[RMDB]
RNA sequence: GGGAACGACUCGAGUAGAGUCGAAAAAGAAUGUCCAUUCACCAUGACUCACAGUAAUCUUACUUCUGGGGAGACAAUUCAAUCUAAGCAAAAGGUCAUCUGUACACACACAGUAAAAAUCUGGGAGUCUAUCAUGACCAUUCGUGGUCAUGAUAGAAAAAGAAACAACAACAACAAC
Reactivity to 2A3 in 0.01 (KOAc 150mM, MgCl2 10mM, bicine 150mM(pH8.5), 24C), signal-to-noise 3, nucleotides 027 to 126: a000g070a040a030u070g020u000c030c010a030u080u000c030a010c050c010a060u060g070a060c010u020c050a040c000a060g020u050a070a090u000c050u100u080a090c000u110u030c040u050g040g010g000g020a020g030a030c020a020a070u070u070c030a020a040u060c030u130a070a060g050c030a050a070a030a010g050g040u020c010a080u020c040u030g090u130a020c080a010c010a000c000a000c000a080g030u080a020a160a060a050a040u020c010u020g050g050g000a030g010
Reactivity to DMS in 0.01 (KOAc 150mM, MgCl2 10mM, bicine 150mM(pH8.5), 24C), signal-to-noise 3, nucleotides 027 to 126: a080g020a080a040u010g010u000c030c040a140u010u000c060a170c080c050a110u000g000a110c000u000c030a060c060a060g010u020a080a100u010c110u000u000a060c060u000u010c090u010g010g030g000g010a170g000a030c040a050a120u000u010c060a090a090u000c060u030a060a100g000c120a070a070a100a060g010g010u010c030a080u000c050u010g010u000a060c060a070c190a080c090a070c060a030g010u000a000a050a050a080a050u010c020u000g010g000g000a110g010
Record summary: Chemical mapping of a 177-nucleotide RNA with 2A3 and DMS. It was measured as part of the RMDB library OK2TST. Conditions: 150 mM KOAc, 10 mM MgCl2 and 150 mM bicine (pH 8.5), 24 C.